[RMDB]
This 207-nucleotide RNA was probed chemically with DMS and 2A3. 2A3 adducts were read by reverse transcription with SuperScript II with manganese. It was measured as part of the RMDB library OK3TST.
RNA sequence: GGGAACGACUCGAGUAGAGUCGAAAAAUAAUGUCUGAACAAACUAUUGAACAAAAACUGUCUGCUGAAAUCGUAACUCUGAAGUCUCGUAUCCUUGAUACACAGGACCAGGCGGCUCGUCUGAUGGAAGAAUCCAAAAUUCUGCAAGGAACUUUGGAGAUGCUAACCUAUUCGUAGGUUAGCAUCUAAAAGAAACAACAACAACAAC
Reactivity to DMS in 0.01 (KOAc 150mM, MgCl2 10mM, bicine 150mM(pH8.5), 24C), signal-to-noise 2, nucleotides 027 to 156: a040u020a060a050u000g000u030c010u000g040a090a120c030a080a120a130c050u010a190u000u010g000a100a180c020a010a060a050a080a080c030u010g000u000c010u040g000c030u000g020a030a070a080u000c090g060u010a080a040c020u000c030u000g010a090a160g010u000c020u000c070g020u010a090u010c010c080u000u010g030a180u000a030c090a060c080a040g010g000a110c030c000a120g040g060c030g000g000c070u000c040g000u000c000u010g010a110u010g020g010a050a110g000a220a160u010c010c010a050a000a060a010u010u010c020u010g000c240a060a300g010g000a030a010c040u030u000u000g000g000
Reactivity to 2A3 in 0.01 (KOAc 150mM, MgCl2 10mM, bicine 150mM(pH8.5), 24C), signal-to-noise 2, nucleotides 027 to 156: a000u060a040a060u050g020u000c040u070g130a090a030c030a080a100a070c060u070a040u140u120g060a050a030c030a020a130a040a020a010c020u050g010u040c020u030g020c000u030g040a030a070a060u070c040g030u030a040a010c040u000c020u050g080a070a020g020u000c010u010c080g050u070a050u030c020c030u020u170g000a000u000a070c030a000c030a050g010g010a040c010c000a000g060g010c000g050g020c050u030c030g050u030c050u040g040a080u040g010g000a050a060g020a060a000u010c030c020a000a000a090a100u060u050c040u070g060c140a010a010g030g000a000a000c000u000u040u000g020g050